[RMDB]
RNA sequence: GGGAACGACUCGAGUAGAGUCGAAAACACCAUUCUCGAAGGGCUGGAGGCCGUCCGCAAACGUCCCGGCAUGUACAUUGGCUCGACCGGUGAGCGCGGUUUACACCAUCUCAUUUGGGAGGUGGUCUGGAACCUGGUAGUUCGCUACCAGGUUCCAAAAAGAAACAACAACAACAAC
Reactivity to 2A3 in 0.01 (KOAc 150mM, MgCl2 10mM, bicine 150mM(pH8.5), 24C), signal-to-noise 2, nucleotides 027 to 126: c030a050c010c010a220u050u000c040u030c020g030a000a000g030g020g000c080u070g000g010a000g030g000c010c040g110u170c070c010g070c100a000a000a170c100g150u110c030c000c000g080g000c070a060u040g000u040a100c090a140u100u220g090g000c000u050c050g080a090c020c000g000g020u050g020a010g010c070g000c000g060g000u070u090u110a090c080a000c000c000a030u000c000u000c010a260u000u010u200g100g020g000a000g000g000u000g000g040u000c010
Reactivity to DMS in 0.01 (KOAc 150mM, MgCl2 10mM, bicine 150mM(pH8.5), 24C), signal-to-noise 1, nucleotides 027 to 126: c080a090c110c000a140u000u030c000u000c010g000a090a120g050g040g000c010u020g000g030a080g000g020c030c090g000u050c110c160g070c120a160a300a140c030g090u000c000c040c000g020g010c040a000u000g000u050a000c020a140u000u000g000g000c210u060c080g000a010c030c090g000g000u050g000a070g000c060g000c000g000g000u010u000u090a110c130a170c000c000a010u000c000u000c000a140u000u000u000g020g000g000a060g000g040u000g000g000u010c170